RNA sequence: GGGAACGACUCGAGUAGAGUCGAAAAUUGAAAUUAAAAGAUAUGUGGAUGGGGAAGGCUACAACAUGGCCCAAUCCAACAUGACCAAAGAUUGGUUCAUGGUUCAAAUGCUGGCCCAUUAUAACAUAGGAUACCAAGGCUAUCACUUGCCCGAAUCAAACCUCUGUCAAUUCGUUGACAGAGGUUUAAAAGAAACAACAACAACAAC
Reactivity to DMS in 0.01 (KOAc 150mM, MgCl2 10mM, bicine 150mM(pH8.5), 24C), signal-to-noise 2, nucleotides 027 to 156: u000u010g030a110a090a180u000u000a110a080a190a170g020a130u000a020u000g030u000g000g010a060u010g000g000g000g050a180a170g000g050c020u010a170c050a050a000c000a300u000g010g060c100c000c000a000a080u000c030c070a050a150c070a040u000g020a170c120c030a010a240a040g000a060u000u000g000g000u000u000c000a030u000g000g000u000u000c140a060a040a040u020g040c080u000g000g050c050c000c000a000u000u000a080u000a030a030c000a050u010a020g020g010a090u000a100c060c050a110a040g030g050c040u000a080u030c030a130c050u000u000g020c020c020c000g020a100a160u020c110
Reactivity to 2A3 in 0.01 (KOAc 150mM, MgCl2 10mM, bicine 150mM(pH8.5), 24C), signal-to-noise 1, nucleotides 027 to 156: u030u050g030a060a020a000u160u100a130a010a000a000g150a160u060a000u150g000u060g050g010a000u000g000g020g030g020a080a100g000g010c030u080a080c080a090a010c000a000u030g010g000c050c000c000a010a000u060c000c010a010a030c160a100u130g070a020c030c020a160a060a060g060a010u030u000g010g000u050u000c000a000u000g020g010u060u140c080a090a060a090u110g000c000u030g080g080c000c000c000a080u090u140a100u010a080a000c010a010u050a180g110g000a010u000a050c000c050a010a080g010g000c080u010a040u170c060a060c240u080u090g040c130c060c060g000a020a020u120c040